Conditions: 150 mM KOAc, 10 mM MgCl2 and 150 mM bicine (pH 8.5), 24 C. The record gives the reactivity of an RNA of 207 nucleotides to 2A3.
[RMDB]
RNA sequence: GGGAACGACUCGAGUAGAGUCGAAAAGGGGUCGAUCCCUCAGUACGCUCAUUGUCAGCUCGCACAGGCUGAAGCCUCCACGGCCUGUGGGAGCUUGGAUUUAUGAGCGGAACCGGGAUCGACGGAGGCACCCAAAAGUCCACCUUCGGGUGGACAAGACACUGUAUUGGUUCGCCAAUACAGUGUCAAAAGAAACAACAACAACAAC
Reactivity to 2A3 in 0.01 (KOAc 150mM, MgCl2 10mM, bicine 150mM(pH8.5), 24C), signal-to-noise 1, nucleotides 027 to 156: g050g020g000g030u000c000g000a010u000c000c000c000u000c000a000g000u000a000c000g000c000u010c000a000u050u010g010u050c080a010g010c000u000c030g300c010a000c010a000g000g000c010u040g030a080a020g010c020c040u080c030c010a040c010g000g000c000c000u010g000u000g010g060g000a000g000c010u010u030g020g010a000u140u170u050a010u030g020a000g000c010g000g000a000a000c010c000g000g000g000a000u000c000g000a000c000g000g020a000g020g000c030a050c030c000c000a020a170a040a040g000u030c000c010a000c000c000u070u100c240g030g010g000u000g000g000a000c000a000a010

It was measured as part of the RMDB library RNAMAK.
The 2A3 profile rests on 1,937 reads.